RNA sequence: GGGAACGACUCGAGUAGAGUCGAAAAGUGCCUCGUCGGCCCGGCUUGCCAACCUGAUCCGAAGUUCAAGGUGGUUUCUCUGGCCUUCCAGAGAGAUGCGCGUCGGAAGAACCGACGAACAAACCUUAAAACAAAACGACGUUCGCGUCGUUUUGAACAAGUUAAAUCAGUUCGCUGAUUUAACUUGAAAAGAAACAACAACAACAAC
Reactivity to 2A3 in 0.01 (KOAc 150mM, MgCl2 10mM, bicine 150mM(pH8.5), 24C), signal-to-noise 5, nucleotides 027 to 156: g060u040g060c000c020u020c010g010u000c000g010g040c010c000c000g000g000c040u080u120g010c010c020a100a070c020c020u000g020a040u040c050c110g240a240a090g070u100u080c080a080a010g000g000u020g000g000u010u080u010c000u000c000u000g030g020c050c060u300u150c030c000a000g000a000g000a000g010a050u160g060c060g000c030g070u020c000g000g020a060a060g020a070a060c010c010g010a000c000g010a010a010c020a010a080a020c020c030u140u210a070a090a020a040c010a000a000a000a000c000g020a000c010g020u050u080c210g020c010g110u000c000g000u030u000u000u000g000a010a010
Reactivity to DMS in 0.01 (KOAc 150mM, MgCl2 10mM, bicine 150mM(pH8.5), 24C), signal-to-noise 2, nucleotides 027 to 156: g020u010g020c090c040u000c000g020u000c030g010g010c030c010c060g040g030c020u000u000g000c030c040a090a030c010c010u000g000a080u000c050c080g010a110a190g010u000u010c060a050a050g000g000u000g020g020u000u010u000c010u000c000u000g020g000c240c120u000u000c010c010a030g000a050g000a020g020a060u000g020c010g010c130g050u000c020g000g030a080a160g020a100a120c000c000g000a020c010g000a020a050c030a070a080a140c010c000u040u000a040a080a140a170c010a010a010a010a010c000g010a030c000g000u000u000c240g020c050g040u000c000g000u040u000u000u010g000a070a160

This 207-nucleotide RNA was probed chemically with 2A3 and DMS. The RNA was probed in 150 mM KOAc, 10 mM MgCl2 and 150 mM bicine (pH 8.5) at 24 C. The 2A3 profile rests on 4,687 reads. 2A3 adducts were read by reverse transcription with SuperScript II with manganese.